[RMDB]
RNA sequence: GGGAACGACUCGAGUAGAGUCGAAAAGAUAUGGACUGCAGAGCAACAGCACGCAGUCGGAAACGACUGACGUGACAUGCGAUCAGUCCUAAGUCAAAAGACGGUACGACUUCGGUCGUACCGUCAAGUAAAACUCUAUGUUCGCAUAGAGUUUUACAAAAGAAACAACAACAACAAC
Reactivity to 2A3 in 0.01 (KOAc 150mM, MgCl2 10mM, bicine 150mM(pH8.5), 24C), signal-to-noise 3, nucleotides 027 to 126: g010a010u030a010u050g020g010a000c000u040g060c230a040g010a020g070c030a020a300c100a290g070c010a000c010g000c000a010g000u020c000g020g000a040a010a010c000g030a010c000u060g220a290c020g020u010g100a140c040a130u090g000c000g000a020u020c010a000g000u010c000c000u000a020a010g020u000c010a000a080a070a200g000a000c000g030g000u010a010c030g000a000c030u110u150c300g070g000u000c000g010u020a000c000c000g010u010c000a000a000
Reactivity to DMS in 0.01 (KOAc 150mM, MgCl2 10mM, bicine 150mM(pH8.5), 24C), signal-to-noise 7, nucleotides 027 to 126: g000a020u000a190u000g000g000a010c000u000g000c260a030g020a300g000c000a080a110c210a160g000c010a020c000g010c010a000g000u000c000g010g000a030a050a080c010g020a020c000u000g010a090c020g020u000g000a050c100a140u000g000c010g000a240u000c000a000g000u010c000c010u010a010a090g000u010c020a080a080a110a150g000a010c000g010g000u000a010c020g000a020c000u000u010c210g030g010u000c000g000u000a000c000c000g000u000c000a000a040